[RMDB]
RNA sequence: GGGAACGACUCGAGUAGAGUCGAAAACGUCCGCCGUAAACCCGAGGUUUCCUGGGCAAGGCUAAUCCUCCCAGGGUCAGUCGGGGGCUAAGGCGAGGCCGGAAGGCGUAGUCGAAGCGCAGCAGGCGGUCCCCUCAAGGUUCGCCUUGAGGGGACCAAAAGAAACAACAACAACAAC
Reactivity to DMS in 0.01 (KOAc 150mM, MgCl2 10mM, bicine 150mM(pH8.5), 24C), signal-to-noise 1, nucleotides 027 to 126: c200g000u000c020c000g110c000c000g000u000a050a160a240c020c000c000g070a030g000g000u000u010u040c000c000u000g020g020g010c200a060a000g000g040c300u130a200a300u060c000c000u000c000c000c000a040g020g050g000u000c000a000g000u000c000g000g000g000g000g020c090u000a050a300g000g000c000g000a070g070g000c000c000g010g070a200a050g000g000c050g000u000a300g000u000c000g000a300a090g000c020g080c150a220g010c090a080g030g000c040
Reactivity to 2A3 in 0.01 (KOAc 150mM, MgCl2 10mM, bicine 150mM(pH8.5), 24C), signal-to-noise 1, nucleotides 027 to 126: c000g020u010c000c010g000c000c000g020u040a040a060a110c010c000c000g000a000g020g000u010u090u100c000c000u010g040g000g030c140a050a020g010g000c060u100a100a080u150c000c020u220c000c000c000a000g000g000g000u020c000a020g140u000c000g020g000g000g020g010c010u000a010a000g000g010c000g000a070g010g000c020c000g000g070a170a090g010g010c000g000u000a000g020u080c040g000a070a010g010c010g050c010a060g020c010a000g070g030c000